RNA sequence: GGGAACGACUCGAGUAGAGUCGAAAAGUUGGAAAAACUUAUCUCUACUGCUCGUGAUGGCGUAAGGCGAGGCGAUAACUUCCAUAGUGUCUUAACAACAUUCAUUGACGCAGCACGAGGCCCCGCAGUUUUUUGUAUUGUUCGCAAUACAAAAAACAAAAGAAACAACAACAACAAC
Reactivity to 2A3 in 0.01 (KOAc 150mM, MgCl2 10mM, bicine 150mM(pH8.5), 24C), signal-to-noise 2, nucleotides 027 to 126: g000u010u000g050g050a100a060a010a000a020c000u020u020a070u050c010u000c010u050a050c010u020g010c010u010c000g000u030g010a020u030g040g040c020g030u010a020a000g020g030c040g030a060g050g030c050g030a080u070a130a080c050u090u000c000c020a040u050a100g110u110g000u030c000u020u040a110a050c020a020a000c010a040u130u150c020a010u070u220g010a010c080g000c010a010g000c010a010c040g020a000g010g000c000c000c010c010g000c030a050
Reactivity to DMS in 0.01 (KOAc 150mM, MgCl2 10mM, bicine 150mM(pH8.5), 24C), signal-to-noise 3, nucleotides 027 to 126: g000u000u000g000g020a060a100a070a020a030c010u000u000a110u000c000u000c010u000a090c050u000g000c010u010c010g040u010g000a050u010g010g010c290g030u000a020a070g030g010c000g000a090g020g000c300g020a070u000a100a090c130u010u000c020c020a210u000a140g010u020g010u000c010u000u010a070a070c090a060a220c010a050u000u010c050a030u000u030g020a080c130g010c030a040g020c020a030c130g010a020g000g000c060c000c000c020g010c190a080
Structure probing data (2A3 and DMS) for a 177-nucleotide construct.
DMS adducts were read by reverse transcription with MarathonRT.
2A3 adducts were read by reverse transcription with SuperScript II with manganese.
For DMS, 1,729 sequencing reads were counted.
The 2A3 profile rests on 2,486 reads.